[RMDB]
RNA sequence: GGGAACGACUCGAGUAGAGUCGAAAAACUCAAGCCGGUCCCCGAAGGCCAAGAGGAUGAUGACGAGCCGGACGAAAUGUUGUUCGCCAAAGUUCGCAUUAUCGGCACGAACUAUGAGCGCUGGGUGUGACUAACACACAUUCGUGUGUGUUAGUCAAAAAGAAACAACAACAACAAC
Reactivity to DMS in 0.01 (KOAc 150mM, MgCl2 10mM, bicine 150mM(pH8.5), 24C), signal-to-noise 4, nucleotides 027 to 126: a050c020u000c020a060a070g010c040c010g020g000u000c010c010c000c070g010a110a110g010g030c020c050a100a090g010a120g000g000a020u000g000a040u000g010a140c030g010a060g010c000c080g010g020a090c040g010a030a040a080u010g010u010u000g010u000u010c000g030c010c010a060a100a100g010u010u000c010g000c040a030u000u000a050u000c030g010g020c050a130c090g000a050a070c080u000a080u000g000a120g010c090g010c050u000g000g000g020u000g010
Reactivity to 2A3 in 0.01 (KOAc 150mM, MgCl2 10mM, bicine 150mM(pH8.5), 24C), signal-to-noise 3, nucleotides 027 to 126: a000c020u020c030a030a000g020c010c020g060g040u020c060c010c000c000g080a080a030g070g000c000c020a100a020g090a050g180g030a020u060g000a000u020g050a100c000g010a000g000c030c000g060g000a120c010g070a070a070a090u260g060u300u130g120u070u080c010g000c050c030a100a090a010g020u020u020c010g000c040a010u040u070a060u070c020g030g010c040a010c050g050a110a030c030u130a120u280g070a050g080c070g000c100u060g030g030g010u110g030